[RMDB]
RNA sequence: GGGAACGACUCGAGUAGAGUCGAAAACGAGGUCGUACAAUACGGUGUUCAUUGGGGGUUUAAGUAAGACACUGUGUACGACCAUGAAUAUGUUUGAUUAUUAAACCCCCAAUUCAGGCAUACUCAAGGUAGACGGUGUAUUCGUACAUCGUCUACCAAAAGAAACAACAACAACAAC
Reactivity to 2A3 in 0.01 (KOAc 150mM, MgCl2 10mM, bicine 150mM(pH8.5), 24C), signal-to-noise 9, nucleotides 027 to 126: c050g040a100g000g010u010c000g010u020a000c040a070a110u120a190c080g010g020u020g040u100u140c120a140u120u090g000g000g000g010g040u030u040u100a250a200g060u110a110a030g080a020c000a000c010u020g010u010g000u040a000c000g000a000c000c000a000u010g000a020a010u020a010u040g030u020u040u040g040a050u010u120a050u080u130a130a020a030c000c010c000c000c020a000a000u050u020c010a000g010g000c000a000u020a050c020u020c030a040a090
Reactivity to DMS in 0.01 (KOAc 150mM, MgCl2 10mM, bicine 150mM(pH8.5), 24C), signal-to-noise 5, nucleotides 027 to 126: c060g020a140g010g000u000c020g010u000a010c020a100a110u070a290c070g020g020u000g000u020u010c190a110u020u020g010g010g000g020g000u000u010u000a040a080g010u030a040a130g000a040c000a010c000u000g010u000g000u010a000c010g000a000c010c000a030u030g020a030a060u010a030u000g000u000u000u000g000a070u060u020a080u000u010a010a010a010c000c000c000c000c010a010a020u010u010c050a020g000g000c020a030u000a010c050u000c020a100a120